[RMDB]
RNA sequence: GGGAACGACUCGAGUAGAGUCGAAAAACGGGCAUUGCUGCACGUCCUCCACCAGGUGAACAGUUUAAGCACCUCGUGCCUCUUAUGCAUAAGGGGGCUGCGUGGCCUAUUGUUAGACGACGUAUAGGGUAAAAUAUUAGUUCGCUAAUAUUUUACCAAAAGAAACAACAACAACAAC
Reactivity to 2A3 in 0.01 (KOAc 150mM, MgCl2 10mM, bicine 150mM(pH8.5), 24C), signal-to-noise 3, nucleotides 027 to 126: a010c020g000g020g000c020a040u060u290g020c080u080g010c040a020c060g020u000c000c000u020c000c000a040c000c000a010g020g000u030g030a090a030c070a130g040u040u110u160a070a010g040c010a020c020c000u010c010g010u010g010c010c010u070c000u080u080a090u220g110c020a080u060a180a060g000g000g000g020g000c030u020g000c000g020u020g040g000c000c000u050a090u050u090g080u040u080a040g010a080c070g020a000c010g050u050a040u130a210g160
Reactivity to DMS in 0.01 (KOAc 150mM, MgCl2 10mM, bicine 150mM(pH8.5), 24C), signal-to-noise 5, nucleotides 027 to 126: a110c060g000g000g030c030a080u010u010g020c170u010g000c030a040c050g000u000c030c010u000c050c020a100c050c100a040g010g010u000g000a050a060c120a110g010u000u000u010a090a110g010c030a060c020c020u010c180g020u000g000c010c030u000c030u000u000a070u010g040c190a100u010a080a040g000g000g000g010g010c060u000g010c030g010u000g020g020c070c010u000a050u000u000g010u000u000a040g000a060c040g000a030c040g000u000a060u010a110g010
Source: RMDB library 15KREP, as collected in RNAgym.
Structure probing data (2A3 and DMS) for a 177-nucleotide construct.
The RNA was probed in 150 mM KOAc, 10 mM MgCl2 and 150 mM bicine (pH 8.5) at 24 C.
For 2A3, 2,933 sequencing reads were counted.
For 2A3 the reverse transcriptase was SuperScript II with manganese.